[RMDB]
Chemical mapping of a 207-nucleotide RNA with 2A3 and DMS.
Conditions: 150 mM KOAc, 10 mM MgCl2 and 150 mM bicine (pH 8.5), 24 C.
RNA sequence: GGGAACGACUCGAGUAGAGUCGAAAAGACGUGGAGGUCUCGCGCCCUCCUUUGCGCGUAAGUACGUCGAAAUUCGGUGCUCUGGAUCGCACCGUCUGAUCCAUUAGAUAUCCGCUAUGUGCCGCGGUUGGGCAUUUACACUUACCCGAAAGGGGAAAAAUUUAUUACCAUUCGUGGUAAUAAAUUUAAAAGAAACAACAACAACAAC
Reactivity to 2A3 in 0.01 (KOAc 150mM, MgCl2 10mM, bicine 150mM(pH8.5), 24C), signal-to-noise 4, nucleotides 027 to 156: g020a000c020g020u040g040g050a040g030g070u020c030u050c070g030c000g020c040c020c000u090c020c020u060u060u110g020c020g010c000g000u020a050a030g070u060a050c020g000u000c030g020a000a020a140u070u040c000g020g000u010g010c020u000c030u150g100g040a090u090c030g010c010a040c030c000g000u010c010u010g030a010u000c010c030a040u070u100a050g060a080u080a070u090c030c010g010c030u030a040u130g050u040g040c040c020g030c040g070g000u080u030g060g000g000c020a010u060u070u070a020c030a010c020u100u100a050c010c030c000g030a050a050a040g010g000g020g050a060a070
Reactivity to DMS in 0.01 (KOAc 150mM, MgCl2 10mM, bicine 150mM(pH8.5), 24C), signal-to-noise 4, nucleotides 027 to 156: g000a060c040g030u000g010g010a080g030g020u000c030u000c130g010c060g000c200c030c020u000c010c030u000u000u000g010c020g010c050g010u010a060a120g020u000a050c030g030u000c040g010a070a080a140u000u000c030g010g030u000g000c000u000c110u000g000g010a080u000c180g000c010a190c030c030g020u000c030u000g000a120u020c020c030a170u000u000a120g020a180u000a100u000c030c010g020c060u000a120u010g020u010g030c080c020g040c040g020g010u010u020g010g000g020c040a050u000u000u000a080c060a070c070u000u000a160c000c020c000g020a060a110a200g010g000g020g000a010a040
Background:
2A3 adducts were read by reverse transcription with SuperScript II with manganese. The data come from the RNA Mapping Database (RMDB), library OK3TST. The 2A3 profile rests on 3,010 reads.